[RMDB]
RNA sequence: GGGAACGACUCGAGUAGAGUCGAAAAUAAGAUAUCAGAGGAGAUCAAGAAGUCCUACUGAUCAAACAUGCGCUUCCAAUAGUAGAAGGACGUUAAGCAUUUAUCAUUGAACUAUAAUUGUUCAUUGCAUCUAAUUAUACUUCGGUAUAAUUAGAUGAAAAGAAACAACAACAACAAC
Reactivity to DMS in 0.01 (KOAc 150mM, MgCl2 10mM, bicine 150mM(pH8.5), 24C), signal-to-noise 8, nucleotides 027 to 126: u010a080a140g010a140u010a050u000c010a020g010a090g000g010a060g010a100u010c170a130a150g000a150a210g000u000c000c010u000a140c010u010g000a020u000c120a090a090a100c180a030u000g010c030g000c040u010u000c010c040a120a120u010a120g010u000a080g020a080a070g000g000a060c090g000u000u010a070a100g010c060a050u000u000u000a080u020c020a040u010u000g010a010a010c020u000a070u000a090a110u010u000g010u000u000c000a030u000u000g010
Reactivity to 2A3 in 0.01 (KOAc 150mM, MgCl2 10mM, bicine 150mM(pH8.5), 24C), signal-to-noise 9, nucleotides 027 to 126: u070a010a030g060a040u090a010u100c000a000g010a010g040g010a050g030a090u120c090a080a110g120a140a010g180u000c020c000u040a290c010u020g000a010u020c030a010a090a020c040a040u050g000c030g010c030u020u000c010c000a070a160u100a120g120u030a030g040a150a030g020g010a010c040g030u070u090a070a020g020c020a040u070u100u130a140u130c040a040u010u050g010a010a010c020u040a030u120a300a170u180u070g000u020u010c010a010u020u050g020
Source: RMDB library RFMREP, as collected in RNAgym. Chemical mapping of a 177-nucleotide RNA with DMS and 2A3. The DMS profile rests on 10,943 reads. Reactivities are rounded to 0.1 and cut off at 0 and 3.